[RMDB]
RNA sequence: GGGAACGACUCGAGUAGAGUCGAAAAGAUAUGGAGAGUUCAAAACCUGGGUAGAUCGAUAAGAGUAUGUCGGAAACGACAUGACUCUUUUGACGAUCCUACCCAGGUUUUGAACUCUCCUAAGUCACAAUUACAGUCAGUUCGCUGACUGUAAUUGAAAAGAAACAACAACAACAAC
Reactivity to DMS in 0.01 (KOAc 150mM, MgCl2 10mM, bicine 150mM(pH8.5), 24C), signal-to-noise 3, nucleotides 027 to 126: g010a030u000a300u010g000g010a020g010a020g010u000u000c010a010a000a000a000c000c000u000g020g000g030u000a020g000a020u000c000g010a140u000a010a010g010a020g020u000a010u000g000u010c000g010g000a110a090a300c010g000a000c000a000u000g000a040c000u000c000u000u000u000u000g020a270c130g000a010u000c170c070u000a000c000c000c010a000g010g000u000u000u000u000g000a010a000c000u000c000u000c010c000u000a000a070g000u000c040a260

Chemical mapping of a 177-nucleotide RNA with DMS. For DMS the reverse transcriptase was MarathonRT. It was measured as part of the RMDB library TTRINS. The reactions ran in a buffer of 150 mM KOAc, 10 mM MgCl2 and 150 mM bicine (pH 8.5), at 24 C. Values cover nucleotides 27 to 126.